RNA sequence: GGGAACGACUCGAGUAGAGUCGAAAAUCUCCUCUUUUGAGGAGACCUGGUGAGAGCGCUAGGAAGGGCUUUUAACGUUGCAUUGCCCCUAUACACCUUUUAACUGGUGUAUAGUUAACCUCGUGGGCCAAUUUAAGUUUGCGUAGGAAGCAACGAAGCUCUUAUGCGAUUUCGGUUGCAUGAGGGCAAAAGAAACAACAACAACAAC
Reactivity to 2A3 in 0.01 (KOAc 150mM, MgCl2 10mM, bicine 150mM(pH8.5), 24C), signal-to-noise 1, nucleotides 027 to 156: u010c010u000c010c000u000c010u000u250u090u250g010a000g000g000a000g000a000c000c000u000g010g000u030g010a220g010a010g050c070g000c050u010a000g010g030a020a020g000g000g020c000u010u070u000u090a110a000c000g010u000u000g000c000a020u000u060g000c000c000c000c000u000a000u000a000c000a000c000c000u020u040u050u170a110a070c070u010g000g000u000g000u000a000u000a000g000u000u020a010a010c000c000u000c000g010u000g020g010g000c010c000a020a010u040u080u140a100a000g010u010u010u010g000c000g010u000a000g010g010a010a010g010c000a000a010c000g030a020a000
Reactivity to DMS in 0.01 (KOAc 150mM, MgCl2 10mM, bicine 150mM(pH8.5), 24C), signal-to-noise 1, nucleotides 027 to 156: u000c000u010c000c010u000c000u000u010u000u010g000a010g000g000a000g030a000c020c040u000g040g030u010g000a110g020a120g030c030g050c070u000a060g040g020a190a080g030g010g030c020u000u000u000u000a050a200c040g020u000u000g010c000a230u010u000g010c000c020c050c000u020a010u000a010c000a010c010c000u010u010u000u010a050a170c200u000g030g040u010g000u000a000u010a010g020u000u000a060a050c020c000u000c010g010u000g000g030g000c010c020a040a080u000u000u010a060a080g010u000u000u000g020c020g010u000a050g040g000a140a120g020c010a010a030c020g020a100a240
This 207-nucleotide RNA was probed chemically with 2A3 and DMS. DMS adducts were read by reverse transcription with MarathonRT. For 2A3 the reverse transcriptase was SuperScript II with manganese. For 2A3, 1,792 sequencing reads were counted. The DMS profile rests on 3,483 reads. Values cover nucleotides 27 to 156.